[RMDB]
An RNA of 207 nucleotides, treated with DMS and 2A3 and read out base by base. It was measured as part of the RMDB library RNAMAK. The reactions ran in a buffer of 150 mM KOAc, 10 mM MgCl2 and 150 mM bicine (pH 8.5), at 24 C. The 2A3 profile rests on 1,589 reads.

RNA sequence: GGGAACGACUCGAGUAGAGUCGAAAAGCGCACGUUCGCGUGCGCAAAAAAACCUUUGUGCGUAGGGAGCGAUGGUCUAGAGGCCCAUUGGGCUCCCCACCUAGUCCAUCGCGAAGAACUACGCACUCUGGUAAAAAGUGCAACUUCGGUUGCACAAUACACAUUCUAGGUUCGCCUAGAAUGUGUAAAAAGAAACAACAACAACAAC
Reactivity to DMS in 0.01 (KOAc 150mM, MgCl2 10mM, bicine 150mM(pH8.5), 24C), signal-to-noise 1, nucleotides 027 to 156: g020c030g020c020a000c040g040u000u000c260g050c030g060u000g020c060g040c000a000a010a030a050a060a090a020c010c020u010u000u000g000u000g010c080g000u000a000g000g000g000a190g040c020g000a040u010g000g010u000c000u000a040g040a190g020g010c100c000c020a130u010u030g040g020g010c050u000c180c040c020c040a190c150c010u000a030g000u000c010c000a010u000c020g020c010g000a040a080g000a130a080c010u000a010c010g030c000a000c010u020c000u000g080g050u000a010a070a100a070a090g000u000g000c010a000a010c010u000u010c230g090g020u010u000g000c000a000c010a040a060
Reactivity to 2A3 in 0.01 (KOAc 150mM, MgCl2 10mM, bicine 150mM(pH8.5), 24C), signal-to-noise 1, nucleotides 027 to 156: g030c010g020c000a000c040g060u130u150c210g040c050g050u100g060c010g010c080a000a000a090a000a000a000a030c010c000u000u010u000g000u000g020c000g000u010a000g000g000g000a010g000c000g010a000u000g000g010u010c000u010a000g010a010g000g020c030c000c120a300u220u300g030g000g010c010u100c030c010c010c000a010c000c010u000a010g000u000c000c000a000u010c030g030c000g000a020a000g000a010a010c000u000a000c000g000c000a000c000u000c000u000g000g010u080a130a150a000a030a010g010u010g000c010a010a020c000u070u080c190g130g000u010u000g000c000a000c000a000a000